[RMDB]
RNA sequence: GGGAACGACUCGAGUAGAGUCGAAAAACACCCCCUUUUCACUUUGCCAAUUGGACUUAUGUCUUUAUUGGUCAUUCAAGUGGGGCAAAAGAAAUAUCCUUUUAAAACUCAGGCAAACUGGGUGUUUGUCUUGGAUCCUGUCAGAGGAAACAGGUAAGAAAGAGUGAUUGUUCGCAAUCACUCUUUCAAAAGAAACAACAACAACAAC
Reactivity to 2A3 in 0.01 (KOAc 150mM, MgCl2 10mM, bicine 150mM(pH8.5), 24C), signal-to-noise 2, nucleotides 027 to 156: a000c070a060c010c000c000c010c000u020u010u020u140c060a060c060u080u050u040g010c020c000a030a020u000u000g010g000a040c020u300u240a130u300g010u020c000u030u250u080a010u000u000g000g020u030c040a030u090u060c050a040a000g020u140g000g000g020g000c020a000a120a000a060g110a010a120a030u090a030u040c000c000u020u170u050u200a020a120a030a020c010u040c030a000g000g000c010a060a050a020c070u070g190g060g070u100g050u020u030u020g030u000c000u030u050g060g000a050u070c000c000u000g030u030c010a090g060a000g170g000a020a050a000c000a000g000g000u060a070a010
Reactivity to DMS in 0.01 (KOAc 150mM, MgCl2 10mM, bicine 150mM(pH8.5), 24C), signal-to-noise 1, nucleotides 027 to 156: a170c050a120c010c000c000c030c020u000u020u000u000c070a140c070u010u000u000g000c020c010a050a030u000u000g000g010a030c000u000u030a200u010g000u010c010u000u000u010a010u000u000g040g020u000c090a130u010u000c110a060a050g020u000g040g010g110g090c090a080a090a060a140g010a140a000a190u000a120u000c000c010u000u000u010u000a060a050a160a080c010u040c060a010g030g000c050a080a070a200c030u030g010g000g010u000g090u000u010u010g010u000c040u000u010g010g000a070u000c030c020u000g020u020c050a140g000a280g020g020a180a060a060c010a030g020g000u010a150a300